[RMDB]
RNA sequence: GGGAACGACUCGAGUAGAGUCGAAAAGGACGUAGAGUGUCGGCAAGCUCUAUAUAUGGACACUUACGAAGGGUUUUGGUUGUUUUGUAUCUCAAGCCGACUUUGAGUAUUUGAGGAAAAUACGACAUGAAUCCUGUGACGUUCGCGUCACAGGAAAUCAGCAGAAGAGAUUCGUCUCUUCUGCUGAAAAAGAAACAACAACAACAAC
Reactivity to 2A3 in 0.01 (KOAc 150mM, MgCl2 10mM, bicine 150mM(pH8.5), 24C), signal-to-noise 2, nucleotides 027 to 156: g060g040a000c000g010u000a000g000a010g090u050g000u030c050g040g090c090a060a080g020c020u010c020u030a040u070a030u040a000u180g150g070a000c030a020c110u070u070a010c080g070a060a110g000g000g030u060u120u130u080g060g010u040u010g030u010u010u010u040g050u060a080u010c040u030c060a010a010g000c010c000g030a040c030u030u030u110g030a030g000u010a020u020u060u080g010a100g040g130a000a020a020a020u090a020c040g040a000c050a070u170g100a110a030u000c000c000u000g000u000g010a000c010g030u090u000c280g000c020g110u010c000a010c000a040g000g000a000a000a000
Reactivity to DMS in 0.01 (KOAc 150mM, MgCl2 10mM, bicine 150mM(pH8.5), 24C), signal-to-noise 1, nucleotides 027 to 156: g010g000a110c080g000u010a070g020a020g040u000g000u000c050g020g000c020a070a300g010c050u000c040u020a090u010a190u020a070u020g000g010a070c060a000c020u020u010a040c050g000a090a060g030g010g010u000u000u000u030g010g020u000u020g020u020u000u010u000g030u000a130u000c010u000c040a060a150g020c020c000g040a110c080u000u000u010g010a290g010u000a030u000u000u000g020a150g000g000a180a030a040a040u020a060c040g000a080c110a040u000g010a050a190u000c000c000u000g020u000g010a040c010g070u000u010c300g000c010g040u000c000a010c010a040g040g000a010a020a030

Description
An RNA of 207 nucleotides, treated with 2A3 and DMS and read out base by base. 2A3 adducts were read by reverse transcription with SuperScript II with manganese. Values cover nucleotides 27 to 156. For DMS, 1,723 sequencing reads were counted.